[RMDB]
RNA sequence: GGGAACGACUCGAGUAGAGUCGAAAAUUCAUCUGCGUUAGUCGAGAGAUUUCAAUCGCGACUUGAUGUAAGGACUCUUCAGCCUGUGAUGUGAUCUCUGUGGUUUGAGUACCUUUUAACAUGCUGAGGGUGCAGUACUAUUCGUAGUACUGCACCCAAAAGAAACAACAACAACAAC
Reactivity to DMS in 0.01 (KOAc 150mM, MgCl2 10mM, bicine 150mM(pH8.5), 24C), signal-to-noise 3, nucleotides 027 to 126: u030u010c050a060u000c050u010g000c040g030u000u000a030g020u000c020g000a100g000a080g000a130u010u000u020c300a110a140u000c020g000c020g010a030c040u000u000g000a040u000g010u010a050a030g000g000a060c040u010c040u000u010c110a050g020c030c010u010g030u010g000a040u010g000u010g000a080u010c070u000c010u000g000u000g010g020u000u000u000g020a060g020u000a180c020c010u000u000u000u000a080a060c130a080u000g010c060u000g000a260
Reactivity to 2A3 in 0.01 (KOAc 150mM, MgCl2 10mM, bicine 150mM(pH8.5), 24C), signal-to-noise 2, nucleotides 027 to 126: u070u020c010a020u040c030u080g000c040g100u070u090a040g000u020c050g000a000g010a010g010a120u060u300u150c140a180a100u010c040g040c010g020a010c030u020u060g040a010u010g020u050a040a000g020g030a000c010u000c040u070u050c090a030g050c030c010u040g050u050g050a010u040g050u100g120a080u080c010u020c040u080g050u060g160g050u050u090u060g020a030g020u150a200c010c000u000u020u030u140a060a050c050a050u070g030c010u040g030a050